[RMDB]
RNA sequence: GGGAACGACUCGAGUAGAGUCGAAAAGAUAUGGAACGGGUACCAUCAACAGCUAUCAUCGGAAACGAUGAUAGACAUGAUGUGUACGCCGUUCCUAAGUCAAAAGGGACAGGUUCGCCUGUCCCAACUAACCUGUGAUGUUCGCAUCACAGGUUAGAAAAGAAACAACAACAACAAC
Reactivity to DMS in 0.01 (KOAc 150mM, MgCl2 10mM, bicine 150mM(pH8.5), 24C), signal-to-noise 4, nucleotides 027 to 126: g000a060u010a300u010g010g000a010a000c000g010g000g020u000a000c000c000a020u010c000a020a080c300a160g000c010u010a000u000c000a000u000c000g000g010a170a140a210c010g020a000u000g000a000u000a000g020a020c120a170u020g000a010u000g000u000g050u000a000c010g020c000c000g010u000u000c010c000u000a010a070g010u000c070a110a060a120a110g010g010g010a020c010a010g010g010u000u010c290g010c010c000u000g020u010c000c000c000a010a030
Reactivity to 2A3 in 0.01 (KOAc 150mM, MgCl2 10mM, bicine 150mM(pH8.5), 24C), signal-to-noise 3, nucleotides 027 to 126: g010a000u070a050u140g000g000a000a010c010g010g000g000u000a000c020c000a010u010c010a010a180c030a200g080c000u010a000u000c000a000u000c000g040g030a060a030a060c010g000a010u010g000a010u010a000g000a010c010a050u090g000a000u020g250u060g010u060a000c000g000c000c000g000u010u000c000c000u000a010a000g010u010c020a030a020a080a220g020g000g000a010c010a010g020g080u130u180c300g170c060c000u000g000u000c000c000c000a000a000